[RMDB]
RNA sequence: GGGAACGACUCGAGUAGAGUCGAAAAGGGGUCACCAUUCUCUAGCGUGAUGCGAAGAACUCAAUGUAGAUCUGAAGCCUCCACGGAUCGCAGAUAUUGAGGGAGCAUUCGGGAUGGUGACGGAGGCACCCAAAACCCGAACGUUCGCGUUCGGGAACCCUUGCAGAAUCUUCGGAUUCUGCAAGGGAAAAGAAACAACAACAACAAC
Reactivity to 2A3 in 0.01 (KOAc 150mM, MgCl2 10mM, bicine 150mM(pH8.5), 24C), signal-to-noise 2, nucleotides 027 to 156: g070g000g010g020u020c000a000c020c010a030u080u030c060u010c070u160a190g110c060g300u300g070a010u020g010c000g080a250a000g000a040a000c000u000c000a000a010u010g010u040a050g020a000u000c000u000g020a040a010g030c000c000u000c000c010a030c040g010g000a020u000c000g040c270a010g000a020u010a000u040u020g000a010g000g010g000a020g000c000a000u020u070c110g010g030g000a010u010g010g020u000g000a000c000g000g000a000g000g000c000a010c000c000c010a080a150a060a090c000c000c000g020a000a000c010g020u080u110c300g010c000g170u030u020c010g010g060g020a020a040
The data come from the RNA Mapping Database (RMDB), library RNAMAK. Chemical mapping of a 207-nucleotide RNA with 2A3. Conditions: 150 mM KOAc, 10 mM MgCl2 and 150 mM bicine (pH 8.5), 24 C. Reactivities are given for positions 27 through 156.